[RMDB]
RNA sequence: GGGAACGACUCGAGUAGAGUCGAAAAACGAGGUACGCCUCGAACAUAUGACCGGUGUCAUAGCCUCUAGCACACAGAGGUCGCGUGGGUUCAACUCCCCCCCUUUUCCGAGGGUAUCGGAAACCAAAAAACACAAUUUGGUUCGCCAAAUUGUGAACGGUUCAGUUUUGUUCGCAAAACUGAACCGAAAAGAAACAACAACAACAAC
Reactivity to 2A3 in 0.01 (KOAc 150mM, MgCl2 10mM, bicine 150mM(pH8.5), 24C), signal-to-noise 2, nucleotides 027 to 156: a020c020g000a000g010g030u020a020c150g100c000c000u020c010g030a090a020c030a080u070a100u090g010a010c010c050g090g080u150g040u200c030a040u040a050g030c000c000u000c000u050a060g070c110a050c000a000c020a110g020a000g020g040u050c050g000c010g080u140g050g000g020u170u130c020a030a080c080u060c010c000c030c000c000c000c040u060u090u000u000c010c000g000a010g020g000g010u120a050u000c000g000g000a000a000a000c000c000a050a110a010a000a000a000c010a000c000a010a000u020u010u000g020g030u000u040c050g010c040c000a000a010a000u010u000g000u000g000a020a000
Conditions: 150 mM KOAc, 10 mM MgCl2 and 150 mM bicine (pH 8.5), 24 C. The record gives the reactivity of an RNA of 207 nucleotides to 2A3. It was measured as part of the RMDB library M2RFPK. Reactivities are rounded to 0.1 and cut off at 0 and 3.